Chemical mapping of a 177-nucleotide RNA with 2A3 and DMS. The reactions ran in a buffer of 150 mM KOAc, 10 mM MgCl2 and 150 mM bicine (pH 8.5), at 24 C. For 2A3 the reverse transcriptase was SuperScript II with manganese.
RNA sequence: GGGAACGACUCGAGUAGAGUCGAAAAUUUAUCUGGUGAUCAUCUGGAACCUGCUGUACCAGACGGUACUGCGUGGCUUAAGCGUAGCGGCGCGGCGUAUCGCCUGGCGUCGUGCGCUGGCGCGUCGGACACAAGAUGAGUUCGCUCAUCUUGUGUCAAAAGAAACAACAACAACAAC
Reactivity to 2A3 in 0.01 (KOAc 150mM, MgCl2 10mM, bicine 150mM(pH8.5), 24C), signal-to-noise 4, nucleotides 027 to 126: u080u070u040a140u020c050u050g050g000u070g110a090u090c040a030u000c030u030g050g040a060a060c020c030u070g050c070u070g030u020a010c010c000a060g120a240c090g040g000u020a040c010u030g010c000g060u050g210g000c010u140u260a060a010g000c000g020u040a050g100c020g020g000c000g000c030g000g020c030g000u170a150u300c090g000c020c010u030g170g020c000g010u010c010g000u000g010c000g000c020u010g000g000c020g000c010g040u040c080g100
Reactivity to DMS in 0.01 (KOAc 150mM, MgCl2 10mM, bicine 150mM(pH8.5), 24C), signal-to-noise 4, nucleotides 027 to 126: u010u000u010a070u010c070u000g010g010u010g010a070u000c090a090u000c030u010g000g000a100a100c040c120u000g020c100u010g000u000a110c010c000a130g020a070c160g000g010u000a050c030u010g010c060g000u000g010g010c040u000u010a080a060g010c020g030u000a050g050c010g010g010c000g030c000g010g000c000g020u000a110u010c080g000c020c000u010g020g030c010g030u000c000g030u000g010c010g010c000u000g000g010c010g010c010g000u000c160g010